[RMDB]
RNA sequence: GGGAACGACUCGAGUAGAGUCGAAAAGCGCGUGCCCUGGUCCUUGACCCGCAGAUCAUUCUCUGCGACGAGCCCGACUCGGGUCUGGACCCGGUUCGUACCGCCUACCUGAGCCAGCUGAUCAUGGCCCGCCAAAUUGAUUCGUCAAUUUGGCGGGAAAAGAAACAACAACAACAAC
Reactivity to 2A3 in 0.01 (KOAc 150mM, MgCl2 10mM, bicine 150mM(pH8.5), 24C), signal-to-noise 1, nucleotides 027 to 126: g000c030g020c030g010u040g010c020c000c010u010g000g000u000c000c000u090u260g000a020c020c000c040g000c070a010g060a300u040c010a080u270u160c030u010c000u080g070c030g080a070c030g010a000g030c020c040c030g070a070c010u000c030g000g010g000u020c010u030g000g000a000c040c010c000g000g000u130u180c060g000u010a000c000c000g000c020c000u030a050c020c000u000g030a000g000c010c000a040g020c030u120g030a130u060c030a150u060g110g000
Reactivity to DMS in 0.01 (KOAc 150mM, MgCl2 10mM, bicine 150mM(pH8.5), 24C), signal-to-noise 1, nucleotides 027 to 126: g030c030g000c130g020u000g010c120c000c010u020g000g030u000c020c000u000u000g010a080c040c030c000g040c140a000g020a060u000c090a140u000u000c140u000c010u010g010c110g000a140c130g000a060g000c300c210c080g000a050c030u000c000g000g000g000u000c020u010g000g000a080c010c000c170g030g000u000u020c170g000u010a050c030c000g010c000c020u000a080c000c030u000g000a100g020c040c010a060g000c060u000g010a140u030c100a080u000g010g020